Source: RMDB library OK2TRN, as collected in RNAgym. This 177-nucleotide RNA was probed chemically with DMS. Conditions: 150 mM KOAc, 10 mM MgCl2 and 150 mM bicine (pH 8.5), 24 C. DMS adducts were read by reverse transcription with MarathonRT. For DMS, 965 sequencing reads were counted.

RNA sequence: GGGAACGACUCGAGUAGAGUCGAAAAGCUGCCUCUGACGUCCUUCUCCCCCGGAAACGGGGCCGAAGGGUGGUAACGCGAGUCGCCUGGCGCUCGCACGGGUAUGCGUGGUGGUCGACCCUGGCCGCCACUGACUGGCCUUCGGGCCAGUCAGUGGAAAAGAAACAACAACAACAAC
Reactivity to DMS in 0.01 (KOAc 150mM, MgCl2 10mM, bicine 150mM(pH8.5), 24C), signal-to-noise 1, nucleotides 027 to 126: g020c010u000g000c000c020u000c150u010g030a130c040g000u000c010c020u000u000c000u000c300c000c000c000c010g000g000a030a170a190c000g020g000g040g010c080c060g000a010a000g010g000g030u000g010g030u020a100a120c140g000c010g000a000g040u000c010g050c000c160u020g040g000c000g010c000u000c010g010c010a080c180g020g000g000u020a020u010g020c050g000u000g020g020u000g010g010u000c010g000a190c020c000c010u000g000g000c000c020g040